This 177-nucleotide RNA was probed chemically with DMS and 2A3.
The RNA was probed in 150 mM KOAc, 10 mM MgCl2 and 150 mM bicine (pH 8.5) at 24 C.
The data come from the RNA Mapping Database (RMDB), library OK2TRN.
The 2A3 profile rests on 991 reads.
DMS adducts were read by reverse transcription with MarathonRT.
[RMDB]
RNA sequence: GGGAACGACUCGAGUAGAGUCGAAAAAUAGAUAUGAAGGGAGGGAGCGAGGACUUUUUCAGGCUCCUCCUUCCGGAAGAUGUCUCCAUGGUUCUGCUGGAUGAGACCGCAGUGAAGGUGCGGCUCGCCCUCUAGCCGUAUUCGUACGGCUAGAGGGAAAAGAAACAACAACAACAAC
Reactivity to DMS in 0.01 (KOAc 150mM, MgCl2 10mM, bicine 150mM(pH8.5), 24C), signal-to-noise 2, nucleotides 027 to 126: a140u020a040g000a060u000a050u000g020a140a220g010g000g010a020g020g000g000a010g010c190g010a010g010g000a130c070u000u000u000u000u000c150a060g020g000c010u000c000c020u000c010c000u000u000c000c020g000g000a150a100g000a080u010g010u000c020u000c050c060a110u000g010g000u000u000c060u000g030c040u060g010g010a120u040g000a060g020a100c020c010g010c020a050g000u010g020a110a180g030g010u010g010c020g000g020c010u000c040g010
Reactivity to 2A3 in 0.01 (KOAc 150mM, MgCl2 10mM, bicine 150mM(pH8.5), 24C), signal-to-noise 1, nucleotides 027 to 126: a000u210a020g040a010u070a020u160g110a040a080g050g010g000a000g000g000g000a000g000c140g020a020g040g020a180c020u080u140u070u070u250c280a020g060g020c020u020c000c000u000c000c010u000u010c010c000g010g010a020a000g080a040u060g010u000c020u000c030c010a080u130g070g000u070u010c010u080g030c040u100g060g040a080u020g010a110g090a160c010c000g000c030a040g060u070g220a100a100g100g030u010g000c010g020g000c010u020c000g010